[RMDB]
RNA sequence: GGGAACGACUCGAGUAGAGUCGAAAAGCCCGCUGUAUACGAUGUCCGUGAAGCUGGCGGUGAUCGGUAUGUGAAUCGGGAUAUUCACGUCGACGCUCACAAUCGGGAUUUCGGGAAUGUCGACGCCGUGGAACGGGUCUUUCGAGACCCGUUCCACAAAAGAAACAACAACAACAAC
Reactivity to 2A3 in 0.01 (KOAc 150mM, MgCl2 10mM, bicine 150mM(pH8.5), 24C), signal-to-noise 1, nucleotides 027 to 126: g020c010c010c010g000c060u140g040u010a120u000a020c020g020a030u100g020u000c000c000g010u000g160a020a000g140c000u060g060g020c060g080g000u020g000a210u030c010g000g000u040a250u200g160u020g020a100a010u000c080g180g000g000a020u100a050u130u070c000a010c000g000u000c020g140a060c000g020c000u100c000a060c000a000a140u190c050g040g050g100a090u110u000u210c000g000g000g040a060a070u220g000u050c020g020a000c070g070c000c100